[RMDB]
Background: Conditions: 150 mM KOAc, 10 mM MgCl2 and 150 mM bicine (pH 8.5), 24 C. Structure probing data (2A3 and DMS) for a 177-nucleotide construct. DMS adducts were read by reverse transcription with MarathonRT. 2A3 adducts were read by reverse transcription with SuperScript II with manganese. For DMS, 21,072 sequencing reads were counted. It was measured as part of the RMDB library OK2TST.
RNA sequence: GGGAACGACUCGAGUAGAGUCGAAAACGGCCUGACCUAUUUCAACACGACGCCGCUGGGCCGCGCCGUGACUGGUACCAUGCUGGUUGCUGCGAUGAAAGAAGAUGGCGUGAAUAUCUGGGGUGAACAUUAAUAGUACCUUCGGGUACUAUUAAUGAAAAGAAACAACAACAACAAC
Reactivity to 2A3 in 0.01 (KOAc 150mM, MgCl2 10mM, bicine 150mM(pH8.5), 24C), signal-to-noise 3, nucleotides 027 to 126: c020g010g010c010c000u030g050a080c020c020u090a190u090u170u130c080a100a050c030a020c130g140a010c010g020c030c000g000c040u030g000g020g010c000c010g000c010g000c000c010g010u010g010a010c010u020g000g020u130a210c070c060a120u300g000c010u030g020g010u020u020g010c010u000g010c010g040a050u110g110a090a080a060g110a020a020g060a100u100g010g000c010g000u020g040a080a050u140a070u080c070u090g000g000g040g000u040g060a030a010
Reactivity to DMS in 0.01 (KOAc 150mM, MgCl2 10mM, bicine 150mM(pH8.5), 24C), signal-to-noise 9, nucleotides 027 to 126: c060g010g000c010c010u000g010a150c070c030u000a100u000u000u010c080a070a160c100a090c100g010a050c040g010c010c030g010c050u000g010g010g010c070c040g010c040g010c010c070g010u000g010a050c040u000g010g010u000a110c170c200a090u010g010c020u000g010g010u000u000g000c020u000g010c010g010a100u010g010a080a080a120g010a090a060g000a090u000g000g010c010g000u010g000a070a090u010a070u010c090u000g010g000g000g010u000g010a080a180